The record gives the reactivity of an RNA of 207 nucleotides to DMS and 2A3.
The DMS profile rests on 4,829 reads.
Conditions: 150 mM KOAc, 10 mM MgCl2 and 150 mM bicine (pH 8.5), 24 C.
2A3 adducts were read by reverse transcription with SuperScript II with manganese.
The data come from the RNA Mapping Database (RMDB), library ARCHII.
Values cover nucleotides 27 to 156.

RNA sequence: GGGAACGACUCGAGUAGAGUCGAAAAGUUGACUCCUUCGGGAGUCAACAAACGGGCCUCCUCGCAUGGUGGGGCGGUGAACCUGGUCAGGUCGGGAACGAAGCAGCCACAAUCGUUUUCCGCCAGUGCCGAAAAGCUCAACGUUUCGACGUUGAGCGAACGCUAUUAUGUUCGCAUAAUAGCGUUCAAAAGAAACAACAACAACAAC
Reactivity to DMS in 0.01 (KOAc 150mM, MgCl2 10mM, bicine 150mM(pH8.5), 24C), signal-to-noise 2, nucleotides 027 to 156: g030u000u000g000a030c000u000c000c000u000u040c300g030g020g000a020g010u000c000a000a010c010a030a100a100c070g030g010g010c010c010u000c010c020u000c130g030c080a100u000g000g030u000g020g010g030g030c040g000g010u010g010a060a120c030c010u000g010g010u000c060a160g040g020u000c050g040g010g010a040a110c030g020a050a160g000c030a180g010c110c060a090c050a130a170u000c020g010u010u010u000u000c000c020g000c010c010a090g020u000g010c030c010g000a010a040a090a160g000c000u010c000a000a020c000g000u000u000u010c290g030a100c000g020u010u000g000a020g030c010
Reactivity to 2A3 in 0.01 (KOAc 150mM, MgCl2 10mM, bicine 150mM(pH8.5), 24C), signal-to-noise 5, nucleotides 027 to 156: g010u010u000g000a000c000u010c010c020u030u090c160g090g000g000a000g010u000c000a000a000c000a000a010a000c040g040g060g010c000c010u010c010c010u030c020g050c080a140u170g050g030u100g020g030g010g010c020g000g010u050g030a050a040c000c030u040g010g020u050c060a080g010g040u120c060g030g010g020a040a030c010g000a050a010g040c100a030g100c070c040a080c070a040a090u050c020g000u010u020u050u070c000c010g000c000c000a040g020u060g080c020c010g040a090a100a030a030g000c000u000c000a000a000c000g000u010u060u130c190g120a020c000g000u000u000g000a000g000c010